[RMDB]
RNA sequence: GGGAACGACUCGAGUAGAGUCGAAAAGUGCGCUAUUUCGAUAGCGCACAAAGGCGGCGAGUCUCGCUCGGCCGCGCGCGACAGCGCGCAGCGCAGCCGGAACAUAACGCCACUUCGGUGGCGUUAAUAACCUAUUCAUGUUCGCAUGAAUAGGUUAAAAAGAAACAACAACAACAAC
Reactivity to DMS in 0.01 (KOAc 150mM, MgCl2 10mM, bicine 150mM(pH8.5), 24C), signal-to-noise 6, nucleotides 027 to 126: g010u000g010c000g020c000u000a000u000u000u010c160g010a020u000a000g010c000g020c010a000c000a010a050a080g020g000c000g000g010c000g000a010g000u000c010u000c010g010c000u010c090g000g010c000c000g020c010g030c000g020c010g010a190c300a130g010c000g020c000g050c010a010g000c000g010c010a020g010c000c000g010g000a070a080c110a160u000a010a000c000g000c000c000a000c000u000u010c190g030g020u000g000g010c000g010u000u000a010a090
Reactivity to 2A3 in 0.01 (KOAc 150mM, MgCl2 10mM, bicine 150mM(pH8.5), 24C), signal-to-noise 2, nucleotides 027 to 126: g000u010g000c000g000c010u000a020u000u100u030c050g090a010u010a000g000c000g000c000a000c000a000a000a010g000g000c010g010g000c010g000a000g010u000c000u000c020g020c030u110c100g000g000c000c010g030c000g000c000g020c020g060a060c060a130g050c010g000c000g000c040a010g010c000g000c010a000g020c010c000g000g060a050a020c040a060u080a030a000c010g000c010c010a010c000u040u070c180g070g000u010g010g000c000g000u010u000a000a000
Structure probing data (DMS and 2A3) for a 177-nucleotide construct. For 2A3, 5,068 sequencing reads were counted. As a SHAPE reagent, 2A3 marks flexible, mostly unpaired nucleotides at the ribose 2'-OH. It was measured as part of the RMDB library M2PK50. The RNA was probed in 150 mM KOAc, 10 mM MgCl2 and 150 mM bicine (pH 8.5) at 24 C.